[RMDB]
RNA sequence: GGGAACGACUCGAGUAGAGUCGAAAACCCGUUUUGUUCGCAAAACGGGACUCAUCUUUGCUUGGCAGCAUAGCAGGUGUUCGCUGGACUGCUGGCUUAUCCUUGGAGGCAGUUUCGACUGCCUCAAACAUGGCUAUCUUUUCGAAGAUAGCCAUGUAAAAGAAACAACAACAACAAC
Reactivity to 2A3 in 0.01 (KOAc 150mM, MgCl2 10mM, bicine 150mM(pH8.5), 24C), signal-to-noise 4, nucleotides 027 to 126: c000c010c010g000u010u000u000u010g020u020u030c130g000c110a010a000a000a000c000g000g030g040a040c020u050c080a230u050c100u080u150u080g010c030u040u200g080g000c000a020g000c010a060u070a110g010c040a040g050g210u140g140u290u160c060g010c030u040g000g090a170c000u000g000c000u010g010g020c020u000u090a160u120c020c010u010u100g240g000a000g010g020c000a000g000u020u070u090c110g060a020c010u000g020c000c000u010c000a000a010
Reactivity to DMS in 0.01 (KOAc 150mM, MgCl2 10mM, bicine 150mM(pH8.5), 24C), signal-to-noise 4, nucleotides 027 to 126: c010c000c000g010u000u000u000u000g010u000u010c210g030c010a010a000a010a010c000g020g000g010a110c080u000c100a090u010c130u010u000u000g000c000u000u010g030g020c070a030g000c110a140u000a030g000c030a070g000g010u010g010u020u010c140g000c020u000g000g000a180c030u010g010c010u000g000g000c020u010u000a080u010c060c040u000u010g010g000a030g010g000c000a010g000u000u010u010c160g020a020c000u000g000c000c000u010c000a010a050

This 177-nucleotide RNA was probed chemically with 2A3 and DMS. Values cover nucleotides 27 to 126. The reactions ran in a buffer of 150 mM KOAc, 10 mM MgCl2 and 150 mM bicine (pH 8.5), at 24 C. Values are in units of 0.01, from 0 to 300, in steps of 10. For DMS, 6,397 sequencing reads were counted.